This 177-nucleotide RNA was probed chemically with DMS and 2A3. The RNA was probed in 150 mM KOAc, 10 mM MgCl2 and 150 mM bicine (pH 8.5) at 24 C. The DMS profile rests on 2,475 reads. For 2A3, 2,287 sequencing reads were counted. For DMS the reverse transcriptase was MarathonRT.
RNA sequence: GGGAACGACUCGAGUAGAGUCGAAAAGAUAUGGAGCACUACCCACCGAACUACUUCGAAUACUCGGAAACGAGUAGUAGAAGCGAGGUGCUCCUAAGUCAAAGCCCUUCCGUUCGCGGAAGGGCAACUACUUGAAGCUGUUCGCAGCUUCAAGUAGAAAAGAAACAACAACAACAAC
Reactivity to DMS in 0.01 (KOAc 150mM, MgCl2 10mM, bicine 150mM(pH8.5), 24C), signal-to-noise 3, nucleotides 027 to 126: g000a100u010a130u000g020g000a020g020c000a010c010u000a140c030c010c030a300c200c050g000a130a020c090u040a230c010u000u010c010g000a150a290u000a010c000u000c010g000g000a050a050a180c000g000a000g010u000a020g000u000a210g000a000a010g020c070g010a120g010g000u000g000c000u000c000c000u000a010a070g000u020c080a090a110a140g000c000c000c010u000u000c000c000g020u000u020c220g000c000g010g010a010a000g020g000g020c000a000a020
Reactivity to 2A3 in 0.01 (KOAc 150mM, MgCl2 10mM, bicine 150mM(pH8.5), 24C), signal-to-noise 2, nucleotides 027 to 126: g030a010u280a100u300g000g010a010g000c010a010c010u130a170c020c040c030a030c030c030g010a070a040c030u190a000c030u300u050c000g140a190a070u000a030c010u000c010g000g000a010a100a060c020g000a000g000u000a000g000u060a020g020a050a010g060c010g020a010g050g000u000g000c000u040c010c000u050a100a000g120u090c140a050a060a090g000c020c000c000u000u000c020c020g030u080u070c300g000c010g130g000a000a000g000g010g000c010a010a000